The record gives the reactivity of an RNA of 177 nucleotides to DMS. The data come from the RNA Mapping Database (RMDB), library M2PK50. Values are in units of 0.01, from 0 to 300, in steps of 10. For DMS the reverse transcriptase was MarathonRT. Conditions: 150 mM KOAc, 10 mM MgCl2 and 150 mM bicine (pH 8.5), 24 C. For DMS, 1,070 sequencing reads were counted.
[RMDB]
RNA sequence: GGGAACGACUCGAGUAGAGUCGAAAAUGGUGCCCGUUCGCGGGCACCACCUCGUGGUUAGGGCCACGUUAAAUAGUUGCUUAAGCCCUAUGCGUUGAUAAAGAUGCGCGAAAUUCGUUUCGCGCAAGGUUGAAGCAUGAUUCGUCAUGCUUCAACCAAAAGAAACAACAACAACAAC
Reactivity to DMS in 0.01 (KOAc 150mM, MgCl2 10mM, bicine 150mM(pH8.5), 24C), signal-to-noise 1, nucleotides 027 to 126: u000g000g020u000g030c000c000c020g000u000u010c210g040c080g010g010g010c000a000c000c000a000c010c000u000c000g050u000g000g000u010u000a030g000g000g000c000c000a000c010g000u000u040a020a030a020u000a010g010u000u000g030c150u000u000a080a050g030c000c010c000u000a010u000g010c300g000u000u030g010a080u000a080a100a070g000a130u020g000c000g000c000g000a000a010a030u000u000c200g000u000u000u000c000g000c010g030c000a000a010